[RMDB]
RNA sequence: GGGAACGACUCGAGUAGAGUCGAAAAAUACCUGUAAUCCUAGCACUUUGGGAAGCUGAGGUGGGUGGAUCACUUGAGCUCAGGAGUUCGAGACCAAUCAGGGUAACACGGUAAAACCCCGUCUCUACGAUUACACGUAAUUCGUUACGUGUAAUCGAAAAGAAACAACAACAACAAC
Reactivity to DMS in 0.01 (KOAc 150mM, MgCl2 10mM, bicine 150mM(pH8.5), 24C), signal-to-noise 6, nucleotides 027 to 126: a070u010a040c010c010u010g010u000a050a040u000c000c000u010a170g010c060a060c030u010u000u000g020g000g010a150a100g020c030u010g010a020g000g010u000g000g010g020u000g000g010a060u000c130a060c030u000u010g010a040g010c050u010c090a120g020g000a060g030u000u000c050g010a040g010a120c030c020a050a080u010c080a060g010g010g010u000a040a040c050a020c130g010g010u000a020a020a090a090c040c010c000c160g010u010c020u000c010u000a240
Reactivity to 2A3 in 0.01 (KOAc 150mM, MgCl2 10mM, bicine 150mM(pH8.5), 24C), signal-to-noise 4, nucleotides 027 to 126: a000u020a000c000c000u000g020u040a020a030u010c000c000u010a030g070c020a030c060u040u040u040g040g010g020a140a040g090c030u030g030a010g020g060u050g030g030g060u080g030g040a090u090c020a020c080u000u030g030a010g000c010u020c100a160g060g200a050g090u040u050c040g010a020g030a060c000c020a030a090u120c050a060g000g020g000u020a030a020c030a010c090g020g000u030a030a040a050a070c020c010c000c010g040u010c020u000c020u040a030
Chemical mapping of a 177-nucleotide RNA with DMS and 2A3. Source: RMDB library OK2TRN, as collected in RNAgym. For 2A3, 10,571 sequencing reads were counted. The RNA was probed in 150 mM KOAc, 10 mM MgCl2 and 150 mM bicine (pH 8.5) at 24 C. The DMS profile rests on 7,936 reads.